[RMDB]
RNA sequence: GGGAACGACUCGAGUAGAGUCGAAAACUUAUGAGAGAGUGAUGACCUCUCAGCCCCUCCACCUUGGGGUGCCCUAUUCAGAGCACUGCAGUUCCGAUAGAAAGGCUAAGCACGUCGCAAUGACGUGGACACGUUGUACGUUCGCGUACAACGUGUCAAAAGAAACAACAACAACAAC
Reactivity to DMS in 0.01 (KOAc 150mM, MgCl2 10mM, bicine 150mM(pH8.5), 24C), signal-to-noise 1, nucleotides 027 to 126: c120u030u020a040u010g030a030g010a010g020a020g000u000g000a080u020g000a270c280c000u000c000u010c010a030g010c030c000c010c000u000c110c090a150c090c120u010u010g000g000g000g050u000g010c010c010c000u000a120u000u020c080a030g010a090g000c040a060c040u010g020c090a050g010u000u010c030c000g010a030u020a080g020a070a040a130g000g010c080u000a070a120g000c050a010c020g000u000c000g000c200a090a070u010g010a020c010g010u000g000
Reactivity to 2A3 in 0.01 (KOAc 150mM, MgCl2 10mM, bicine 150mM(pH8.5), 24C), signal-to-noise 1, nucleotides 027 to 126: c040u110u080a100u080g000a000g000a010g000a010g010u070g040a090u040g040a060c000c000u000c000u000c020a000g010c000c020c030c000u000c020c020a190c020c030u040u060g010g000g000g070u030g020c010c010c020u030a070u030u110c030a040g010a020g020c040a000c070u180g000c040a060g030u070u000c020c020g000a040u010a030g130a030a050a000g000g000c020u010a010a010g070c000a000c010g000u000c010g000c180a130a260u300g000a000c010g010u020g000
About this RNA
Structure probing data (DMS and 2A3) for a 177-nucleotide construct. The DMS profile rests on 881 reads. Values cover nucleotides 27 to 126. Reactivities are rounded to 0.1 and cut off at 0 and 3. The data come from the RNA Mapping Database (RMDB), library VIROID.